[RMDB]
RNA sequence: GGGAACGACUCGAGUAGAGUCGAAAACGGUACUAUGAAUUGAUGCAAGGUGUGGAGCGACCUUAAACAGUUCUGGUGGUGCUCUGAAUGGAGUGCUCUACUGAGAUUAUAAAAUAGAUGGUAAGCUGAAGGGGAAAUGAGUUCGCUCAUUUCCCAAGGUUACUGCAGAGUUCGCUCUGCAGUAACCAAAAGAAACAACAACAACAAC
Reactivity to 2A3 in 0.01 (KOAc 150mM, MgCl2 10mM, bicine 150mM(pH8.5), 24C), signal-to-noise 4, nucleotides 027 to 156: c020g030g050u080a040c050u090a070u190g060a060a070u060u060g050a100u090g050c050a010a020g020g000u040g010u060g030g010a030g010c020g010a020c000c010u070u050a070a130a000c010a040g000u030u040c030u070g040g000u020g000g000u020g000c010u010c000u060g110a090a100u260g020g010a010g020u050g010c010u000c030u060a050c040u030g040a040g020a100u080u170a090u150a140a100a080a040u090a060g040a020u030g010g040u040a040a060g030c050u030g100a110a060g000g010g000g000a000a000a000u000g010a000g010u030u060c130g030c030u000c000a000u000u000u000c000c000c020a000a000